[RMDB]
RNA sequence: GGGAACGACUCGAGUAGAGUCGAAAAAAGAUAUGGAGUGCGUUGAGAACUUGCAUCACUGAUGACCCAUCUUCGGAAACGAAGAUGGCAAGGUGAUGAGUUCAAUGAUGCGCACUCCUAAGUCAAACAUAAGAGUAUACUUCGGUAUACUCUUAUGAAAAGAAACAACAACAACAAC
Reactivity to 2A3 in 0.01 (KOAc 150mM, MgCl2 10mM, bicine 150mM(pH8.5), 24C), signal-to-noise 7, nucleotides 027 to 126: a000a000g040a030u050a030u120g010g000a000g000u010g000c010g010u030u070g070a030g000a060a000c040u090u300g130c100a000u060c000a000c010u140g100a300u140g040a210c010c010c020a010u000c000u000u000c000g030g030a080a060a050c010g000a010a000g000a000u000g000g000c000a070a130g000g000u000g000a000u000g000a000g000u000u010c010a120a300u150g040a030u100g010c010g000c000a000c000u010c000c000u000a000a000g000u000c000a060a010a040
Reactivity to DMS in 0.01 (KOAc 150mM, MgCl2 10mM, bicine 150mM(pH8.5), 24C), signal-to-noise 9, nucleotides 027 to 126: a100a090g000a040u000a300u000g000g010a010g030u000g010c000g020u000u010g000a110g000a020a010c000u000u020g030c040a020u000c000a010c000u000g010a090u010g000a110c300c000c000a010u000c000u000u000c000g010g000a120a100a190c000g000a010a000g000a010u000g000g000c010a010a040g000g020u000g000a010u000g010a050g010u000u000c010a140a170u010g000a130u000g000c010g000c000a000c000u000c000c000u000a000a070g010u000c030a120a120a220